RNA sequence: GGGAACGACUCGAGUAGAGUCGAAAACCUGUUAUCUGACCAAUAACAGAAUGCACCACAGCGUAAAAUCAUCUGAUUGGGUGAGUUGGUCGCACCGCCAUUCGACGAACGAACGCCAAGCCUAAGCACUACGAGUAUGUGUUCGCACAUACUCGAAACUUCUUUAUGGUUUCGACCAUAAAGAAGUAAAAGAAACAACAACAACAAC
Reactivity to DMS in 0.01 (KOAc 150mM, MgCl2 10mM, bicine 150mM(pH8.5), 24C), signal-to-noise 3, nucleotides 027 to 156: c070c010u000g000u000u000a010u000c010u000g020a070c050c040a300a010u000a010a030c000a030g020a120a130u000g010c050a100c020c010a080c080a090g000c050g020u010a050a050a050a110u000c020a060u010c040u020g020a080u000u000g010g000g050u000g000a270g010u000u000g020g030u000c020g020c030a070c030c010g020c060c030a200u000u000c060g020a060c030g010a110a130c070g000a060a080c020g030c010c030a050a130g000c010c020u010a070a100g020c050a160c010u010a110c020g010a020g010u000a000u000g030u000g020u000u010c300g030c020a020c010a020u000a000c000u000c000g000a010a060
Reactivity to 2A3 in 0.01 (KOAc 150mM, MgCl2 10mM, bicine 150mM(pH8.5), 24C), signal-to-noise 9, nucleotides 027 to 156: c000c000u000g010u010u000a010u010c010u010g010a010c010c020a020a020u010a010a000c000a000g060a100a090u140g010c040a040c050c010a030c040a040g040c030g050u110a030a090a060a080u070c040a030u020c060u140g070a120u080u120g060g000g000u010g010a030g010u010u040g020g000u020c010g020c020a010c010c020g030c040c000a060u070u080c020g050a040c020g020a180a040c030g020a050a020c030g020c030c010a040a050g010c010c030u130a100a020g030c040a060c130u170a070c080g000a000g000u000a000u000g020u000g010u020u070c100g040c050a000c000a000u000a000c000u000c000g000a010a000